[RMDB]
RNA sequence: GGGAACGACUCGAGUAGAGUCGAAAAUGAUGCCUCUCAAGAUCAGUUCAUAAUGGCUUUUGAGAUCGAGGUGAUGAAGUACUUAGGGUUGCCAAGGGACCUAAUCGCUGAUUACAAGUUCAUUAAGCCAUUGACGACUGUUCGCAGUCGUCAAUGGAAAAGAAACAACAACAACAAC
Reactivity to DMS in 0.01 (KOAc 150mM, MgCl2 10mM, bicine 150mM(pH8.5), 24C), signal-to-noise 1, nucleotides 027 to 126: u000g010a070u000g000c010c030u000c040u000c060a130a110g010a020u000c020a050g020u020u000c150a070u000a070a110u010g000g000c020u000u000u000u000g020a080g000a030u020c110g020a170g020g000u010g040a030u000g000a110a180g010u000a030c060u010u000a210g020g000g000u000u010g010c030c020a040a070g000g000g000a030c010c020u010a180a010u000c030g000c000u000g000a130u010u020a080c170a010a090g030u000u000c040a020u000u000a100a080g020